Structure probing data (DMS and 2A3) for a 177-nucleotide construct. For 2A3, 8,394 sequencing reads were counted. Reactivities are rounded to 0.1 and cut off at 0 and 3. The reactions ran in a buffer of 150 mM KOAc, 10 mM MgCl2 and 150 mM bicine (pH 8.5), at 24 C. 2A3 adducts were read by reverse transcription with SuperScript II with manganese.
RNA sequence: GGGAACGACUCGAGUAGAGUCGAAAAGAUAUGGAGGUGUUGACGCAAACUGAGGCUGUCGGAAACGACAGCUACCCACCAAUUUGCGAAGGCCUCCUAAGUCAAAAGUCCUAGUUCGCUAGGACAACAUCAGGGUAAAGUUCGCUUUACCCUGAUGAAAAGAAACAACAACAACAAC
Reactivity to DMS in 0.01 (KOAc 150mM, MgCl2 10mM, bicine 150mM(pH8.5), 24C), signal-to-noise 5, nucleotides 027 to 126: g000a040u000a300u000g010g010a010g020g020u010g010u030u010g010a300c050g010c000a010a010a000c070u000g000a110g020g000c000u010g000u000c000g020g000a120a100a130c000g010a000c000a010g010c010u010a010c050c040c090a300c080c010a010a020u000u010u000g010c000g020a300a160g000g000c000c020u010c000c000u000a010a080g020u000c030a050a070a080a100g010u000c010c000u000a020g010u000u010c190g010c000u000a000g000g000a020c010a040a110
Reactivity to 2A3 in 0.01 (KOAc 150mM, MgCl2 10mM, bicine 150mM(pH8.5), 24C), signal-to-noise 4, nucleotides 027 to 126: g010a020u070a050u160g010g000a000g030g040u150g120u300u300g230a110c030g000c010a030a030a040c030u040g000a010g010g000c010u000g000u000c010g000g030a100a070a040c000g000a000c000a010g000c000u000a000c000c000c000a030c010c010a010a080u030u000u020g010c010g050a100a050g180g000c000c000u000c000c000u020a140a020g040u010c040a030a040a080a090g000u000c000c000u000a010g020u050u060c290g010c190u020a010g020g000a010c010a000a020